Chemical mapping of a 177-nucleotide RNA with DMS and 2A3. 2A3 adducts were read by reverse transcription with SuperScript II with manganese. Conditions: 150 mM KOAc, 10 mM MgCl2 and 150 mM bicine (pH 8.5), 24 C. It was measured as part of the RMDB library OK2TST.
RNA sequence: GGGAACGACUCGAGUAGAGUCGAAAAUCGGUCUUACCGCAUCCAUACUUGGUAAGCUUUUGGGCGGCGCACGCAGUGUCUGGUGGAUUUUGCUACGUCUAUGCUUUGUUGCAGACGUGGUUUGUGCGAGCUCUAAUAAAUUCGUUUAUUAGAGCUCAAAAGAAACAACAACAACAAC
Reactivity to DMS in 0.01 (KOAc 150mM, MgCl2 10mM, bicine 150mM(pH8.5), 24C), signal-to-noise 9, nucleotides 027 to 126: u010c090g010g010u010c040u000u000a050c030c010g010c170a110u010c060c060a080u010a090c130u010u000g010g010u000a040a050g010c110u000u000u000u000g010g010g010c050g010g010c080g010c060a050c070g010c070a070g010u000g010u000c040u000g020g020u000g010g000a140u000u000u000u000g010c010u000a020c010g010u000c010u000a120u010g010c010u000u000u010g010u010u000g020c020a040g000a020c020g010u000g010g010u000u000u000g010u000g010c300
Reactivity to 2A3 in 0.01 (KOAc 150mM, MgCl2 10mM, bicine 150mM(pH8.5), 24C), signal-to-noise 9, nucleotides 027 to 126: u060c010g030g060u030c030u040u060a040c020c010g030c050a080u040c040c010a070u070a210c050u070u100g030g000u060a030a020g000c000u070u080u060u060g050g010g000c020g010g010c020g000c030a030c040g030c030a040g030u020g020u090c040u060g060g010u050g030g050a090u060u060u080u220g010c000u000a000c010g010u000c030u060a160u090g010c010u120u180u240g230u300u090g060c010a000g000a010c000g000u000g000g030u040u080u120g080u050g050c040
The DMS profile rests on 47,107 reads. Values cover nucleotides 27 to 126.